An RNA of 177 nucleotides, treated with 2A3 and DMS and read out base by base.
For DMS the reverse transcriptase was MarathonRT.
Conditions: 150 mM KOAc, 10 mM MgCl2 and 150 mM bicine (pH 8.5), 24 C.
[RMDB]
RNA sequence: GGGAACGACUCGAGUAGAGUCGAAAAUACAAUAGCGUAGGGAACCAAGCUAAGAGGUUGGAAGUCCAACGGUAGAGGGCUUGGUUCGCAGCUGCUCUAGAAGAGGUCCCACUCGCUACGCCGCAAAUCUAUACAAAUCGUUCGCGAUUUGUAUAGAAAAAGAAACAACAACAACAAC
Reactivity to 2A3 in 0.01 (KOAc 150mM, MgCl2 10mM, bicine 150mM(pH8.5), 24C), signal-to-noise 4, nucleotides 027 to 126: u210a010c070a020a120u060a090g030c010g080u050a080g000g080g000a000a000c000c010a010a000g000c010u060a120a030g090a050g240g050u010u010g030g040a290a130g170u150c010c000a010a000c010g010g090u180a080g020a120g090g080g000c010u000u010g000g000u010u010c010g010c000a010g000c000u050g000c020u050c030u080a100g020a190a010g010a080g020g010u030c000c010c000a020c010u020c010g000c010u030a020c030g040c040c020g030c060a060a090a050
Reactivity to DMS in 0.01 (KOAc 150mM, MgCl2 10mM, bicine 150mM(pH8.5), 24C), signal-to-noise 5, nucleotides 027 to 126: u000a110c140a080a080u000a060g010c020g010u000a080g010g010g000a020a000c000c010a000a020g010c010u010a080a120g020a140g010g000u000u000g010g010a300a180g000u020c010c000a020a010c000g020g010u010a100g000a110g000g000g000c000u000u000g000g000u000u000c000g000c050a130g000c040u000g010c070u000c040u000a060g000a100a100g000a050g000g000u000c030c010c000a200c030u000c030g000c030u000a020c070g010c020c070g000c160a060a070a090